[RMDB]
RNA sequence: GGGAACGACUCGAGUAGAGUCGAAAAGAUAUGGACACUAUAAUUGAAACACCUACCCACCGACCUAUCGGAAACGAUAGUGUCGAGGGUAAGUGUCCUAAGUCAAAUCCGCGGUUCGCCGCGGAAACAGCAUAGUGUUGUUCGCAACACUAUGCUGAAAAGAAACAACAACAACAAC
Reactivity to 2A3 in 0.01 (KOAc 150mM, MgCl2 10mM, bicine 150mM(pH8.5), 24C), signal-to-noise 4, nucleotides 027 to 126: g030a010u140a050u230g010g000a000c020a000c040u110a120u160a300a300u240u250g230a180a110a000c070a090c040c040u080a070c030c010c010a120c210c010g000a000c000c000u000a000u000c000g040g040a050a040a030c000g020a000u010a020g200u200g000u140c010g010a120g020g000g010u010a090a000g000u010g000u010c000c000u020a050a000g100u020c030a050a020a160u020c000c000g000c030g040g000u070u100c300g000c090c000g000c000g000g000a000a030a000
Reactivity to DMS in 0.01 (KOAc 150mM, MgCl2 10mM, bicine 150mM(pH8.5), 24C), signal-to-noise 3, nucleotides 027 to 126: g000a060u010a130u000g010g010a010c020a040c030u000a100u010a100a170u010u010g010a130a070a100c130a070c040c080u000a030c000c000c000a300c190c000g000a010c000c000u000a000u000c000g010g020a080a030a170c000g020a010u000a010g010u000g020u000c000g000a070g000g000g010u000a020a010g010u000g010u000c010c020u000a070a100g010u000c040a060a100a140u010c010c000g010c010g020g030u000u020c240g010c010c000g010c000g000g000a010a040a150